[RMDB]
RNA sequence: GGGAACGACUCGAGUAGAGUCGAAAAGAUAUGGAAUCCGUAGGGAGCUGUUGUAUCGGAAACGAUACACAGCGAAGAACUACCGAUUCCUAAGUCAAAGCUAUGGGUGGUUCGCCACCCAUAGCAAGUACAAAGUUAAGUUCGCUUAACUUUGUACAAAAGAAACAACAACAACAAC
Reactivity to DMS in 0.01 (KOAc 150mM, MgCl2 10mM, bicine 150mM(pH8.5), 24C), signal-to-noise 7, nucleotides 027 to 126: g010a020u000a050u010g000g000a010a010u000c010c260g010u000a010g030g010g010a080g040c000u000g000u010u010g020u000a000u000c000g010g010a020a020a040c010g010a020u000a000c000a010c000a000g020c000g030a060a080g010a180a300c000u000a010c010c300g000a010u000u000c010c000u000a000a070g000u000c010a110a150a160g000c000u000a000u010g000g010g030u000g000g010u000u020c300g030c000c000a010c000c000c000a000u000a000g000c000a000a050
Reactivity to 2A3 in 0.01 (KOAc 150mM, MgCl2 10mM, bicine 150mM(pH8.5), 24C), signal-to-noise 3, nucleotides 027 to 126: g000a000u010a010u070g000g000a000a000u000c010c040g000u010a010g030g040g110a300g020c000u020g020u300u120g000u050a000u010c000g000g000a020a000a010c000g000a000u000a000c010a000c010a010g010c010g010a030a020g040a010a000c010u000a010c010c020g000a000u010u010c000c000u000a010a000g010u000c040a160a100a030g000c000u000a000u000g000g010g010u010g020g030u060u110c170g070c030c000a000c000c000c000a000u000a000g000c000a000a000